[RMDB]
RNA sequence: GGGAACGACUCGAGUAGAGUCGAAAAGAUAUGGAAUAGUCACUUGGGAGCUGGUCUCGGAAACGAGCAGCUUUGAUCAAGUGAGCUAUUCCUAAGUCAAAGGUUACAUGGUUCGCCAUGUAACCAAGACUUAUUAUAGCUUCGGCUAUAAUAAGUCAAAAGAAACAACAACAACAAC
Reactivity to DMS in 0.01 (KOAc 150mM, MgCl2 10mM, bicine 150mM(pH8.5), 24C), signal-to-noise 7, nucleotides 027 to 126: g000a030u000a280u000g000g000a020a000u000a000g000u000c000a000c000u000u000g010g000g000a010g010c010u000g000g010u010c000u000c000g000g000a060a070a140c010g010a010g000c000a010g000c000u000u000u010g010a100u010c010a000a010g010u010g000a070g010c000u000a010u000u000c000c000u000a010a070g000u000c040a100a120a130g000g000u010u000a000c000a010u000g000g010u000u020c290g020c000c000a010u000g000u000a000a010c000c000a020a040
Reactivity to 2A3 in 0.01 (KOAc 150mM, MgCl2 10mM, bicine 150mM(pH8.5), 24C), signal-to-noise 6, nucleotides 027 to 126: g010a020u070a030u100g000g000a000a010u000a010g040u030c010a000c010u010u040g080g000g010a010g000c010u050g060g300u160c000u000c000g020g010a070a070a030c000g000a000g000c000a000g010c000u060u030u030g130a180u190c010a000a000g000u000g010a010g010c000u000a000u010u000c000c000u010a060a010g020u010c050a130a040a120g000g000u010u000a000c000a000u000g020g020u030u070c150g060c100c000a000u000g000u000a000a000c000c000a000a000
The record gives the reactivity of an RNA of 177 nucleotides to DMS and 2A3. The reactions ran in a buffer of 150 mM KOAc, 10 mM MgCl2 and 150 mM bicine (pH 8.5), at 24 C. It was measured as part of the RMDB library TTRDEL. Values cover nucleotides 27 to 126.